[RMDB]
RNA sequence: GGGAACGACUCGAGUAGAGUCGAAAAGUGCCUCGUCGGCCCGGCAUGCCAACCUGAUCCGAAGUUCAAGGUGGUUUCUCUGGCCUUCCAGAGAGAUGCGCUUCGGAAGAACCGACGAACAAACCUUAAAACAAAACGACGUUCGCGUCGUUUUGAACACUAAGUAAUGGUUCGCCAUUACUUAGUGAAAAGAAACAACAACAACAAC
Reactivity to DMS in 0.01 (KOAc 150mM, MgCl2 10mM, bicine 150mM(pH8.5), 24C), signal-to-noise 3, nucleotides 027 to 156: g020u000g010c050c040u000c010g010u000c000g040g040c020c020c030g000g000c050a060u010g020c080c060a070a070c030c010u000g010a250u000c020c010g010a050a060g010u000u000c080a090a100g040g030u010g030g000u000u000u000c000u000c000u000g030g010c280c120u000u000c000c000a050g010a040g010a020g020a010u010g000c090g000c010u000u000c020g000g010a110a090g000a040a040c020c010g020a050c010g010a080a100c050a070a110a080c040c010u000u000a070a090a150a210c000a010a000a000a010c000g010a010c020g050u000u000c300g020c020g020u000c000g000u000u000u000u000g010a100a160
Reactivity to 2A3 in 0.01 (KOAc 150mM, MgCl2 10mM, bicine 150mM(pH8.5), 24C), signal-to-noise 9, nucleotides 027 to 156: g030u020g040c010c010u020c010g010u000c010g010g020c090c070c010g020g000c050a050u130g060c020c030a080a110c030c030u080g040a080u030c010c020g040a030a020g020u090u160c090a080a030g080g050u070g050g000u040u040u000c000u000c000u000g030g010c040c080u220u190c020c000a000g000a000g000a000g000a010u060g060c020g000c030u010u000c000g010g000a010a010g000a020a010c010c010g000a000c010g020a050a030c060a060a080a060c020c030u140u210a050a070a040a060c000a000a010a000a000c000g010a000c000g010u030u080c220g010c000g100u000c000g010u000u000u000u000g000a010a000